[RMDB]
RNA sequence: GGGAACGACUCGAGUAGAGUCGAAAAAGGACAGAUGUGAGAGGCGCGGGUCAGCCUGCGGGUGGGCAGGCGCCGGCACCGGGCACAGACCACCCUGGUCUUCCUAACACAGCUUGGGACACCAAGGAUGCCACAGUAAGUUCGCUUACUGUGGCAUAAAAGAAACAACAACAACAAC
Reactivity to 2A3 in 0.01 (KOAc 150mM, MgCl2 10mM, bicine 150mM(pH8.5), 24C), signal-to-noise 1, nucleotides 027 to 126: a000g080g000a030c010a000g130a110u080g030u050g000a050g020a070g070g000c040g020c080g100g030g030u110c080a030g000c000c010u030g010c020g060g090g080u180g050g120g000c000a000g000g010c000g020c060c000g040g000c030a080c030c020g030g040g040c010a030c010a060g060a030c000c020a010c000c040c000u010g070g020u000c000u050u030c000c000u040a080a000c170a010c030a030g130c060u010u010g000g000g100a070c020a010c110c000a070a010g120g000
Reactivity to DMS in 0.01 (KOAc 150mM, MgCl2 10mM, bicine 150mM(pH8.5), 24C), signal-to-noise 3, nucleotides 027 to 126: a060g010g010a100c100a070g020a140u000g000u000g000a110g010a190g020g010c040g060c030g000g000g010u000c090a200g030c010c000u000g020c050g020g010g030u000g010g010g050c010a030g000g000c040g000c040c040g000g030c020a040c000c010g000g000g000c010a060c070a050g000a160c090c060a130c060c040c000u000g010g000u000c090u000u000c010c000u000a060a070c170a130c190a160g000c060u000u000g000g000g010a110c300a080c010c030a030a020g020g000